[RMDB]
RNA sequence: GGGAACGACUCGAGUAGAGUCGAAAAAGCGAUGAUACGUCAUCGCAACGAUUGCCUGAUCGUUAAACAGGAGACGGCCGUGGCCGCGACCACGUAAAAAAGCGUAACGUGGUCUACGGACCACGAAAAAAGCGCGGAACGUUCGCGUUCCGCGCAACAGAAAUGACACGUUCGCGUGUCAUUUCUGAAAAGAAACAACAACAACAAC
Reactivity to 2A3 in 0.01 (KOAc 150mM, MgCl2 10mM, bicine 150mM(pH8.5), 24C), signal-to-noise 1, nucleotides 027 to 156: a000g000c030g010a000u010g000a010u020a070c200g080u000c000a010u000c010g000c000a010a010c000g000a030u020u070g020c000c000u040g010a020u020c070g100u090u050a080a050a050c010a050g040g080a050g100a050c120g040g000c030c000g000u000g000g000c020c000g000c000g000a020c020c010a020c000g030u050a010a070a010a010a040a000g080c010g050u050a100a020c000g000u000g000g000u000c010u020a060c140g000g000a100c000c000a000c000g020a000a000a000a000a000a000g000c000g010c000g000g000a000a010c000g030u100u120c140g010c000g170u000u020c010c000g000c000g010c000a000a010